[RMDB]
RNA sequence: GGGAACGACUCGAGUAGAGUCGAAAAAAUGGCACUGCAGAGCUGAUGGGCCAUGUACCUAUCCAAAAUGAGAUCCCAUCUUGCACACUGUGCUAAUUUGAGAUUCUCAUGCCUCCUAAUUGGAGAGACCGCAUGCCCAGCUUCGGCUGGGCAUGAACCUACGGUAUACGUUCGCGUAUACCGUAGGAAAAGAAACAACAACAACAAC
Reactivity to DMS in 0.01 (KOAc 150mM, MgCl2 10mM, bicine 150mM(pH8.5), 24C), signal-to-noise 1, nucleotides 027 to 156: a040a020u000g010g020c020a070c040u010g000c050a200g000a110g040c040u000g010a110u010g040g000g060c000c020a030u000g020u000a240c080c020u010a100u000c060c060a050a030a120a050u000g010a060g000a070u000c000c010c010a040u000c070u000u000g040c000a050c000a120c120u000g020u020g020c030u000a020a030u000u020u020g010a090g000a040u010u000c000u010c020a040u000g000c070c010u020c000c020u000a130a210u000u000g000g000a120g010a070g010a110c000c070g000c020a040u000g020c000c010c010a050g040c010u000u000c300g030g030c030u000g020g000g030c050a000u000g000a050a100
Reactivity to 2A3 in 0.01 (KOAc 150mM, MgCl2 10mM, bicine 150mM(pH8.5), 24C), signal-to-noise 2, nucleotides 027 to 156: a000a000u070g020g000c040a000c040u040g030c110a070g010a040g080c060u040g010a110u090g050g020g010c000c010a040u050g030u050a060c010c010u040a150u120c080c080a120a060a010a020u070g010a050g020a120u070c000c000c000a000u010c000u020u080g000c030a020c000a030c100u130g020u010g050c070u130a050a110u020u010u010g020a020g000a020u070u000c000u030c020a030u040g070c010c010u030c000c000u080a290a090u240u200g010g000a020g000a010g100a070c000c200g030c050a000u000g000c000c000c000a000g000c000u040u080c210g080g000c000u000g000g050g000c000a000u000g020a000a010

This 207-nucleotide RNA was probed chemically with DMS and 2A3. DMS (dimethyl sulfate) methylates the pairing face of unpaired adenines and cytosines. For 2A3, 1,092 sequencing reads were counted. For DMS the reverse transcriptase was MarathonRT. Values cover nucleotides 27 to 156. For 2A3 the reverse transcriptase was SuperScript II with manganese. The DMS profile rests on 2,356 reads. The RNA was probed in 150 mM KOAc, 10 mM MgCl2 and 150 mM bicine (pH 8.5) at 24 C.